Annotation
Chemical mapping of a 207-nucleotide RNA with 2A3 and DMS. Conditions: 150 mM KOAc, 10 mM MgCl2 and 150 mM bicine (pH 8.5), 24 C.
RNA sequence: GGGAACGACUCGAGUAGAGUCGAAAAUAGUCAUAUGCUUGUCUUAAAGAUUAAGCCAUGCAUGUCUAAGUAUAAGCUUUUAUACGGCUAAACUGCGAAUGGCUCAUUAAAACAGUUAUAGUUUAUUUGAUGGUCUUUACUACAUGGAUAACCGUGGGUUGAACCAUAUCUUCGGAUAUGGUUCAACAAAAGAAACAACAACAACAAC
Reactivity to 2A3 in 0.01 (KOAc 150mM, MgCl2 10mM, bicine 150mM(pH8.5), 24C), signal-to-noise 2, nucleotides 027 to 156: u040a000g050u030c050a090u040a020u200g070c020u050u030g020u010c010u040u090a100a080a030g060a070u060u130a040a050g000c000c000a000u020g030c010a030u180g020u000c060u070a060a050g000u010a070u010a130a050g000c010u140u060u010u140a060u010a030c000g000g050c020u050a110a060a050c040u020g010c000g110a120a070u010g030g010c040u040c070a050u020u080a030a030a050a030c020a000g050u030u140a130u110a120g000u000u250u050a140u060u150u080g050a040u090g020g000u040c000u030u020u030a020c020u020a000c000a020u060g040g080a090u010a070a070c010c060g030u090g020g060
Reactivity to DMS in 0.01 (KOAc 150mM, MgCl2 10mM, bicine 150mM(pH8.5), 24C), signal-to-noise 1, nucleotides 027 to 156: u000a090g020u000c060a040u000a060u000g000c020u000u000g000u000c020u000u000a040a140a130g000a180u000u010a020a050g010c000c010a040u000g000c010a050u000g010u000c040u010a020a180g010u010a010u000a050a080g000c120u000u000u000u000a060u010a050c060g020g000c070u000a030a060a080c010u000g000c010g000a090a070u000g020g010c030u000c010a080u000u000a030a080a060a060c030a120g000u000u000a070u000a130g010u000u000u000a020u020u000u000g010a060u000g020g020u000c050u000u000u000a120c010u000a010c000a050u000g010g030a110u000a050a080c000c020g020u010g000g000